[RMDB]
RNA sequence: GGGAACGACUCGAGUAGAGUCGAAAACACACAAGGUUCGCCUUGUGUGCAAGAAUAGACGAAUACUACCGUAGAAGUAUUCAGGACACAUAACUACGGAAAUGGCGUUCUGCUUCGGCAGAACGAAGUCGGAUGUAUUCUUCGGAAUACAUCCGACAAAAGAAACAACAACAACAAC
Reactivity to 2A3 in 0.01 (KOAc 150mM, MgCl2 10mM, bicine 150mM(pH8.5), 24C), signal-to-noise 3, nucleotides 027 to 126: c010a010c000a000c000a010a010g060g000u020u030c130g080c030c000u000u000g010u000g000u000g000c000a050a020g080a080a060u150a110g100a050c070g000a000a000u000a010c000u080a250c000c010g000u030a010g010a120a000g010u040a010u010u050c030a010g080g090a060c030a000c020a190u250a220a080c020u000a000c010g010g070a010a040a100u180g180g000c010g000u000u000c010u020g020c000u020u040c160g090g000c000a000g000a000a000c010g000a000a020
Reactivity to DMS in 0.01 (KOAc 150mM, MgCl2 10mM, bicine 150mM(pH8.5), 24C), signal-to-noise 1, nucleotides 027 to 126: c010a000c010a010c010a040a020g010g020u000u010c280g000c020c000u000u010g010u010g000u000g010c070a120a080g030a110a080u000a110g020a170c080g000a010a030u000a040c000u000a080c000c000g010u040a000g010a100a020g000u000a000u000u000c040a150g000g020a070c120a050c210a070u010a110a140c010u010a000c000g000g000a230a090a070u020g000g000c010g010u000u000c000u010g010c010u010u010c140g020g000c000a000g000a010a000c000g000a010a010